[RMDB]
RNA sequence: GGGAACGACUCGAGUAGAGUCGAAAAGCUAGGCAUUUCGAUGCCUAGCGAGCGCAGAGUCUAUGCAUCUCUGAAUCACACAACAGCCCUGUCUAUGCGUGGGAGUAUCCCUCUUCGGAGGGAUAAAAUUGGACUAGGAAUUCGUUCCUAGUCCAAUAAAAGAAACAACAACAACAAC
Reactivity to 2A3 in 0.01 (KOAc 150mM, MgCl2 10mM, bicine 150mM(pH8.5), 24C), signal-to-noise 3, nucleotides 027 to 126: g000c000u010a000g000g000c000a010u000u090u130c190g110a000u000g000c010c000u000a000g000c010g010a030g000c090g010c010a000g020a010g040u010c030u110a110u160g020c040a080u050c020u000c000u010g050a090a140u110c020a020c020a010c040a140a090c010a080g030c020c020c000u060g070u060c070u100a080u140g050c030g030u050g030g020g000a040g020u030a010u010c000c010c000u000c020u040u030c140g120g010a010g000g000g020a000u010a000a000a000
Reactivity to DMS in 0.01 (KOAc 150mM, MgCl2 10mM, bicine 150mM(pH8.5), 24C), signal-to-noise 6, nucleotides 027 to 126: g000c000u000a000g000g020c000a010u000u000u020c180g020a030u000g010c000c000u000a000g000c010g000a040g010c210g020c010a030g000a050g010u000c080u010a080u010g010c060a080u000c010u000c010u000g000a100a090u010c100a100c080a050c070a050a080c100a110g000c020c010c010u010g000u010c090u010a060u000g000c060g020u000g010g010g010a120g010u000a010u000c000c000c000u000c000u000u010c180g010g010a020g010g000g010a000u000a000a020a080